Chemical mapping of a 177-nucleotide RNA with 2A3 and DMS. Source: RMDB library OK2TRN, as collected in RNAgym. For DMS, 6,675 sequencing reads were counted. Values are in units of 0.01, from 0 to 300, in steps of 10.

[RMDB]
RNA sequence: GGGAACGACUCGAGUAGAGUCGAAAAAGUGCAAGGGAGAGGGACCGGCAAGCGAGACACUGAGGAGAAGAAACAGAGAAAGAAGCAAGCGCGACUGCUGAAAGAGAAGCGCAGUCUCGGCCUAUGAACUUUUACAGAAGUUCGCUUCUGUAAAAGUAAAAGAAACAACAACAACAAC
Reactivity to 2A3 in 0.01 (KOAc 150mM, MgCl2 10mM, bicine 150mM(pH8.5), 24C), signal-to-noise 3, nucleotides 027 to 126: a000g140u090g010c020a040a040g040g040g000a070g020a020g040g010g020a030c020c010g000g020c020a010a040g030c020g030a040g020a010c050a010c100u070g020a030g010g060a050g010a060a020g020a010a110a010c060a020g050a010g020a030a130a000g040a040a020g030c040a070a000g050c010g000c010g030a030c010u030g010c010u050g060a100a130a020g090a030g020a080a020g040c040g000c020a010g020u000c010u010c030g050g000c000c000u060a090u100g030a060
Reactivity to DMS in 0.01 (KOAc 150mM, MgCl2 10mM, bicine 150mM(pH8.5), 24C), signal-to-noise 6, nucleotides 027 to 126: a080g020u010g000c070a090a090g000g000g000a080g010a060g010g010g010a050c100c050g010g020c080a070a060g000c080g000a080g010a070c090a060c080u010g000a090g000g020a080g010a080a050g010a080a060a050c090a070g000a070g010a040a060a070g000a070a070g010c080a060a100g020c030g020c160g000a060c020u000g000c020u010g010a040a060a150g000a110g000a060a140g010c090g000c020a040g000u000c010u000c040g000g000c030c040u010a090u010g010a090